[RMDB]
RNA sequence: GGGAACGACUCGAGUAGAGUCGAAAAGAUAUGGAUCGAACUACAGUACCCCGAAGAACUACAUCGGAAACGAUGUAGGGAGGAACACUGCGAUCCUAAGUCAAACGAUGCUCUUCGGAGCAUCGAACACUUCUUAACCGUUCGCGGUUAAGAAGUGAAAAGAAACAACAACAACAAC
Reactivity to 2A3 in 0.01 (KOAc 150mM, MgCl2 10mM, bicine 150mM(pH8.5), 24C), signal-to-noise 4, nucleotides 027 to 126: g020a030u070a040u130g000g000a010u010c010g000a110a100c120u190a070c290a040g050u110a100c100c060c000c040g180a300a050g010a070a000c010u000a000c000a000u000c000g010g000a070a030a020c010g000a000u000g000u000a000g040g000g000a050g010g010a070a080c080a010c150u040g020c000g000a010u030c010c010u020a120a010g050u030c030a010a080a100c010g000a000u010g000c000u000c010u060u120c300g090g000a010g000c000a000u000c000g000a030a000
Reactivity to DMS in 0.01 (KOAc 150mM, MgCl2 10mM, bicine 150mM(pH8.5), 24C), signal-to-noise 5, nucleotides 027 to 126: g010a030u000a300u000g010g000a010u000c010g000a080a070c130u000a300c010a020g000u000a230c130c070c010c020g020a100a120g010a160a200c000u000a000c000a010u010c000g010g010a070a090a200c000g020a010u000g000u000a000g000g000g000a090g000g010a090a140c150a020c030u000g000c000g000a030u000c000c000u000a040a080g010u000c040a090a100a230c000g000a020u000g010c000u000c010u000u010c170g010g010a020g010c000a000u000c000g010a050a180
Source: RMDB library TTRDEL, as collected in RNAgym. Structure probing data (2A3 and DMS) for a 177-nucleotide construct. Values cover nucleotides 27 to 126.